[RMDB]
This 177-nucleotide RNA was probed chemically with DMS and 2A3. The RNA was probed in 150 mM KOAc, 10 mM MgCl2 and 150 mM bicine (pH 8.5) at 24 C. Source: RMDB library OK1LIB, as collected in RNAgym.
RNA sequence: GGGAACGACUCGAGUAGAGUCGAAAACAAGUUCAAGGACACCAAAAGCUCAGAACUUUAUCACAUCAAAAAUAACAUCAGAAGAAAAGUUCUAAUCUUAGAUUUCAGAUCGAAGCUCAUGACAAAGCUACAUGACAUCUUUCGAGAUGUCAUGUAGAAAAGAAACAACAACAACAAC
Reactivity to DMS in 0.01 (KOAc 150mM, MgCl2 10mM, bicine 150mM(pH8.5), 24C), signal-to-noise 3, nucleotides 027 to 126: c070a130a090g010u040u030c050a100a110g010g000a070c060a030c050c100a060a080a060a080g000c090u000c100a040g000a000a000c000u000u000u000a030u030c000a100c150a170u020c100a020a060a070a040a090u040a050a100c190a100u040c160a070g020a090a030g000a050a030a020a010g000u000u020c010u000a100a050u020c000u060u000a090g000a070u010u010u020c070a020g000a040u000c040g000a100a050g030c070u000c040a010u010g000a020c060a050a070a170g000
Reactivity to 2A3 in 0.01 (KOAc 150mM, MgCl2 10mM, bicine 150mM(pH8.5), 24C), signal-to-noise 7, nucleotides 027 to 126: c030a030a030g070u090u090c040a060a080g100g020a040c040a070c050c040a030a130a050a000g020c050u040c040a030g000a010a010c000u070u070u050a290u090c030a010c020a080u110c070a060a120a070a090a120u230a150a060c060a090u140c040a040g090a180a000g040a020a150a000a010g000u030u020c040u080a050a080u040c030u040u150a080g020a200u100u120u100c080a060g030a130u060c020g040a040a010g010c010u020c090a050u180g060a090c050a060a120a000g020
Annotation
DMS adducts were read by reverse transcription with MarathonRT. Values cover nucleotides 27 to 126.